[RMDB]
RNA sequence: GGGAACGACUCGAGUAGAGUCGAAAAGACAUACUUAUCAAAAAAGCUCAGCGGUAUUUUAUAUUUGAGUACAGAACCUAAAACAUUGGGAAUUCCGUUGUCCACUAUGUAAAUAAGGAUAGGUUCCUAGUUGAAUGAAAUUCGUUUCAUUCAACUAAAAAGAAACAACAACAACAAC
Reactivity to 2A3 in 0.01 (KOAc 150mM, MgCl2 10mM, bicine 150mM(pH8.5), 24C), signal-to-noise 1, nucleotides 027 to 126: g020a020c020a010u230a040c010u050u090a060u060c030a080a200a120a090a080a100g040c050u020c080a010g000c010g000g050u050a040u000u160u130u020a140u050a070u130u170u130g040a020g020u020a040c050a090g110a110a050c000c000u080a060a080a010a030c060a080u070u110g000g020g060a040a020u100u000c020c020g010u020u030g000u000c000c010a020c070u040a060u090g040u070a010a120a060u050a060a000g120g000a040u040a060g060g000u000u020c000c010
Reactivity to DMS in 0.01 (KOAc 150mM, MgCl2 10mM, bicine 150mM(pH8.5), 24C), signal-to-noise 3, nucleotides 027 to 126: g000a070c040a060u000a060c020u010u000a030u020c010a030a110a180a230a170a090g000c060u000c010a010g020c030g000g020u000a000u010u010u000u010a050u010a050u050u000u010g000a070g010u000a250c130a110g000a130a080c040c010u010a020a040a050a100c130a070u000u000g000g010g010a040a040u000u000c030c020g030u010u010g000u000c040c040a070c130u000a050u000g010u000a040a070a040u000a040a040g000g000a060u000a060g010g010u000u000c010c020